[RMDB]
RNA sequence: GGGAACGACUCGAGUAGAGUCGAAAAGAUAUGGAUGGGGACUACUGGAGUCGUUGAGCUGAUGACCUUUCUCGGAAACGAGAAAGCAAGGCUCACUCGACGUUGAAAGUAGUCCCCAUCCUAAGUCGUCUGUAUAACUCUUCGGAGUUAUACAGACAAAAGAAACAACAACAACAAC
Reactivity to DMS in 0.01 (KOAc 150mM, MgCl2 10mM, bicine 150mM(pH8.5), 24C), signal-to-noise 3, nucleotides 027 to 126: g020a090u020a300u000g000g000a030u000g010g000g010g010a060c000u010a010c010u000g000g020a090g010u000c000g020u010u000g000a020g050c020u000g000a220u010g000a100c300c000u000u000u000c000u010c010g020g010a120a150a220c000g020a010g000a010a000a010g000c080a100a240g000g000c000u000c000a020c210u010c010g010a000c000g000u010u010g010a080a170a010g000u000a010g010u000c000c000c000c000a000u000c000c000u010a010a110g020u010c110
Source: RMDB library TTRINS, as collected in RNAgym. The record gives the reactivity of an RNA of 177 nucleotides to DMS. For DMS the reverse transcriptase was MarathonRT.